RNA sequence: GGGAACGACUCGAGUAGAGUCGAAAAGAUAUGGACGGAUGAGUCAUACCUUAUAGACAUGAUCUAAGGAUCGGAAACGAUCCGAAGAUCAACAGCUAUAAGGUAUGACUCCGCUCCGUCCUAAGUCCACACAAUGGCAGUUCGCUGCCAUUGUGUGAAAAGAAACAACAACAACAAC
Reactivity to DMS in 0.01 (KOAc 150mM, MgCl2 10mM, bicine 150mM(pH8.5), 24C), signal-to-noise 1, nucleotides 027 to 126: g020a200u010a290u020g000g000a000c000g050g010a030u010g010a130g000u000c000a030u000a010c000c000u000u000a000u000a000g000a080c110a280u010g040a010u010c000u000a020a300g000g010a060u000c000g000g000a170a110a240c010g000a000u010c010c010g000a220a040g010a000u000c010a020a060c300a130g000c030u000a000u000a000a000g000g000u000a000u000g000a020c010u000c000c060g000c040u000c010c000g010u000c000c000u010a000a040g010u010c060